[RMDB]
Chemical mapping of a 207-nucleotide RNA with DMS and 2A3.
RNA sequence: GGGAACGACUCGAGUAGAGUCGAAAAGGGGUCCAACUUUGUCAGAGCAUUUCAAAGCGCAUACUGAAGCCUCCACGGUAUGAACUACGCUUUGGUGCUCUUGGAUUUAAGUUGGACGGAGGCACCCAAAAGACCCUCCUGUUCGCAGGAGGGUCAAGUAUUCUUGAAACUUCGGUUUCAAGAAUACAAAAGAAACAACAACAACAAC
Reactivity to DMS in 0.01 (KOAc 150mM, MgCl2 10mM, bicine 150mM(pH8.5), 24C), signal-to-noise 1, nucleotides 027 to 156: g000g000g010g050u000c000c000a000a020c010u000u000u000g000u000c010a150g000a020g030c000a050u000u010u030c000a020a050a040g000c010g010c000a030u000a090c020u000g000a030a140g020c020c010u010c000c050a300c030g000g000u020a040u000g010a090a240c070u000a120c010g000c000u000u000u000g030g000u020g000c010u020c020u000u000g050g000a060u000u000u000a020a020g000u020u000g020g010a040c030g010g000a010g060g090c020a150c000c000c000a080a050a140a210g000a000c010c000c000u020c010c040u010g000u000u000c300g110c020a000g000g000a010g010g010g000u000c000a000a050
Reactivity to 2A3 in 0.01 (KOAc 150mM, MgCl2 10mM, bicine 150mM(pH8.5), 24C), signal-to-noise 2, nucleotides 027 to 156: g040g020g030g010u020c000c000a000a000c010u020u010u020g020u040c140a050g000a000g010c010a010u110u250u300c010a030a010a000g000c020g000c010a000u000a000c000u010g040a170a040g010c000c000u000c020c010a010c010g000g000u010a000u000g010a040a040c050u160a010c280g000c000u000u000u000g000g010u010g000c020u000c000u010u160g040g000a010u160u160u100a010a000g010u000u000g000g000a000c010g000g000a000g000g020c000a020c000c010c000a030a120a010a010g010a000c000c000c000u030c010c000u050g050u070u090c300g030c120a000g000g010a000g000g000g000u000c000a000a000